[RMDB]
This 207-nucleotide RNA was probed chemically with DMS and 2A3. The RNA was probed in 150 mM KOAc, 10 mM MgCl2 and 150 mM bicine (pH 8.5) at 24 C. The data come from the RNA Mapping Database (RMDB), library RSTRND. For 2A3 the reverse transcriptase was SuperScript II with manganese. For 2A3, 1,779 sequencing reads were counted. For DMS the reverse transcriptase was MarathonRT.
RNA sequence: GGGAACGACUCGAGUAGAGUCGAAAAUAACACCUGAUCGCGACGGAAACCCUGGCCGGGGUUGAAGCGUUAAAACUAAGCGGCCUCGCCUUUAUCUACCGUGUUUGUCCGGGAUUUAAAGGUUAAUUAAAUGACAAUACUAAACAUGUAGUACCGAGACACAUUAUAUCUUCGGAUAUAAUGUGUCAAAAGAAACAACAACAACAAC
Reactivity to DMS in 0.01 (KOAc 150mM, MgCl2 10mM, bicine 150mM(pH8.5), 24C), signal-to-noise 1, nucleotides 027 to 156: u000a110a180c050a250c030c000u010g030a120u000c120g000c000g000a130c060g010g000a270a080a080c000c010c010u000g020g030c060c040g010g020g030g020u000u000g020a160a180g000c070g030u000u020a020a080a110a160c080u000a060a060g000c000g030g030c010c010u010c120g020c000c010u000u000u000a030u010c020u030a090c030c000g010u000g050u000u010u000g000u000c070c000g000g020g020a060u000u000u000a020a030a040g020g000u000u010a060a080u000u000a010a080a070u000g010a070c070a050a110u000a070c040u010a070a110a110c060a090u010g010u010a050g020u000a200c040c020g010a300
Reactivity to 2A3 in 0.01 (KOAc 150mM, MgCl2 10mM, bicine 150mM(pH8.5), 24C), signal-to-noise 3, nucleotides 027 to 156: u130a020a010c030a030c020c010u020g080a060u130c050g010c010g090a150c050g060g080a110a010a010c000c010c010u030g000g000c000c000g010g000g000g000u030u030g020a030a010g020c040g010u030u140a020a090a010a070c150u140a030a070g110c010g010g000c010c000u030c030g000c000c000u000u000u000a000u010c010u030a030c010c000g000u000g010u020u020u020g020u020c010c000g010g000g000a000u020u010u010a000a000a000g000g000u000u030a000a010u050u060a020a000a030u070g000a000c010a000a060u080a190c060u140a060a200a090c100a140u170g080u140a050g020u020a100c080c070g070a040